[RMDB]
An RNA of 207 nucleotides, treated with 2A3 and read out base by base. For 2A3 the reverse transcriptase was SuperScript II with manganese. The data come from the RNA Mapping Database (RMDB), library OK3TST. For 2A3, 746 sequencing reads were counted.

RNA sequence: GGGAACGACUCGAGUAGAGUCGAAAAUAAUCGUGACAUGACAUUCGAUUUAAUACACACAGAAGAUUCAAGUCUGGAAAAGUUCUUAUCGCGACCCAAUGUGCUAUUUCGAUACGAAUGGUUUGUAUCGUCCACACUCGAUGAAUCUUUCCCAGGAGACGACAAUACGGUUCGCCGUAUUGUCGUCAAAAGAAACAACAACAACAAC
Reactivity to 2A3 in 0.01 (KOAc 150mM, MgCl2 10mM, bicine 150mM(pH8.5), 24C), signal-to-noise 2, nucleotides 027 to 156: u140a000a060u040c040g070u050g010a020c050a170u130g030a030c020a080u090u030c050g020a040u050u010u050a070a070u120a040c020a000c020a000c000a080g100a120a030g040a080u100u150c150a120a020g050u000c000u080g020g100a120a010a000a010g060u100u000c010u090u140a060u060c050g040c050g130a110c040c020c000a070a130u050g020u000g050c060u050a090u090u130u040c030g000a000u000a120c040g000a050a100u220g070g060u090u080u050g040u030a030u040c010g020u010c030c030a040c010a020c040u000c020g030a010u030g030a030a090u050c000u000u000u000c000c010c030a010g010g030a050